[RMDB]
An RNA of 177 nucleotides, treated with DMS and 2A3 and read out base by base. It was measured as part of the RMDB library M2PK90. In probing experiments dimethyl sulfate is read out at A N1 and C N3, which are open when not base-paired. DMS adducts were read by reverse transcription with MarathonRT. Values cover nucleotides 27 to 126.
RNA sequence: GGGAACGACUCGAGUAGAGUCGAAAAAAGGUGCCAUCAUAUCGGUUAAGAACUCUUAACUCUGAUGGCUUUCGAGUUAUGUGGUGCAUUGAAGCUCUCCCUUCAAUUGGUCGUACAGUUCCGUGAAGAUGCAUCUAGAUUUCGAUCUAGAUGCAUCAAAAGAAACAACAACAACAAC
Reactivity to DMS in 0.01 (KOAc 150mM, MgCl2 10mM, bicine 150mM(pH8.5), 24C), signal-to-noise 6, nucleotides 027 to 126: a080a070g010g000u010g020c010c000a010u000c010a050u010a110u010c250g010g010u000u000a010a010g020a230a150c300u020c010u000u000a000a000c010u000c100u000g010a010u000g000g000c020u000u000u000c040g000a090g020u000u000a040u010g010u000g010g010u000g010c070a080u000u000g010a050a060g000c080u000c060u000c070c090c010u010u000c040a020a070u000u010g010g010u000c040g010u000a040c090a090g010u000u010c010c010g010u000g010a130a120
Reactivity to 2A3 in 0.01 (KOAc 150mM, MgCl2 10mM, bicine 150mM(pH8.5), 24C), signal-to-noise 3, nucleotides 027 to 126: a000a000g130g020u060g000c010c000a000u000c010a010u060a060u210c060g030g000u020u020a010a020g060a300a250c070u030c000u300u000a010a010c010u010c040u090g000a000u000g000g000c000u010u050u000c010g000a010g000u060u090a090u150g070u070g020g020u060g080c030a040u010u050g030a040a020g000c000u010c030u000c040c000c000u020u030c020a070a060u100u060g030g010u040c030g020u070a050c030a070g000u030u030c010c020g040u080g080a060a040

Conditions: 150 mM KOAc, 10 mM MgCl2 and 150 mM bicine (pH 8.5), 24 C.